Chemical mapping of a 177-nucleotide RNA with 2A3 and DMS. For DMS, 1,710 sequencing reads were counted. The RNA was probed in 150 mM KOAc, 10 mM MgCl2 and 150 mM bicine (pH 8.5) at 24 C.
RNA sequence: GGGAACGACUCGAGUAGAGUCGAAAAGGAGGGCAUUCGAUACAGCAGGUGAGCGCAACGAACACGUUAACAGGUUCCCCGAGGAAAAAAUCGAAGGCUACCGCAACGUGCUGUGCCUGCCCGUGCGACAGCCGUAGAGUUUCGACUCUACGGCUGUAAAAGAAACAACAACAACAAC
Reactivity to 2A3 in 0.01 (KOAc 150mM, MgCl2 10mM, bicine 150mM(pH8.5), 24C), signal-to-noise 1, nucleotides 027 to 126: g110g050a030g000g000g000c040a020u010u140c000g090a080u060a130c070a030g070c010a030g020g110u050g060a080g000c070g020c050a070a070c030g030a070a010c030a000c060g030u040u060a180a080c090a120g020g000u020u050c000c000c010c060g080a170g060g070a120a170a100a080a010a000u050c010g030a030a010g060g000c030u020a020c000c000g010c020a010a020c050g030u020g020c000u050g030u030g030c000c000u010g000c000c000c000g010u050g000c030g030
Reactivity to DMS in 0.01 (KOAc 150mM, MgCl2 10mM, bicine 150mM(pH8.5), 24C), signal-to-noise 2, nucleotides 027 to 126: g010g020a160g010g000g020c030a020u000u010c040g030a170u010a070c070a080g000c010a070g000g030u000g010a090g010c030g030c070a060a120c120g030a070a130c070a070c030g020u000u000a060a100c190a110g020g000u010u000c050c010c000c030g000a200g000g040a000a020a080a080a060a050u010c020g000a110a060g000g000c050u000a040c140c020g000c070a070a040c060g000u000g040c030u000g010u000g010c000c010u010g010c040c020c010g010u010g000c070g020